[RMDB]
RNA sequence: GGGAACGACUCGAGUAGAGUCGAAAACAAGUCGAAGCCAGCUGCAGGCUAAACGACCCACGUAAGGCGGCAGUAUAGUGCCGCUGAUCAUGGUGCGGCUUAGAAGUAAGCCCGACCAGGUUUUCAUAUAUGUACCUUCUUUCGAGAAGGUACAUAUAAAAGAAACAACAACAACAAC
Reactivity to 2A3 in 0.01 (KOAc 150mM, MgCl2 10mM, bicine 150mM(pH8.5), 24C), signal-to-noise 6, nucleotides 027 to 126: c030a050a050g020u010c000g090a070a000g000c030c020a040g030c070u180g020c100a070g010g010c010u050a060a040a000c020g020a020c010c000c010a080c090g080u070a080a050g020g000c000g040g000c010a000g040u180a130u200a300g170u080g000c000c000g000c000u010g000a020u050c040a090u070g020g000u080g040c060g010g000c000u010u000a030g010a220a060g080u050a010a010g010c000c070c050g020a020c010c000a030g060g080u010u000u030u040c010a000u000
Reactivity to DMS in 0.01 (KOAc 150mM, MgCl2 10mM, bicine 150mM(pH8.5), 24C), signal-to-noise 5, nucleotides 027 to 126: c110a120a140g010u010c020g030a100a090g010c010c020a110g010c090u000g000c090a110g000g030c020u000a060a080a070c030g000a070c020c030c040a130c190g010u020a070a190g020g000c000g010g040c010a040g010u030a140u020a110g020u000g010c000c000g020c000u010g000a120u010c090a200u000g000g010u000g010c040g000g000c000u000u000a020g010a160a080g000u000a010a010g000c030c010c030g020a010c010c010a030g020g010u000u000u000u010c020a140u000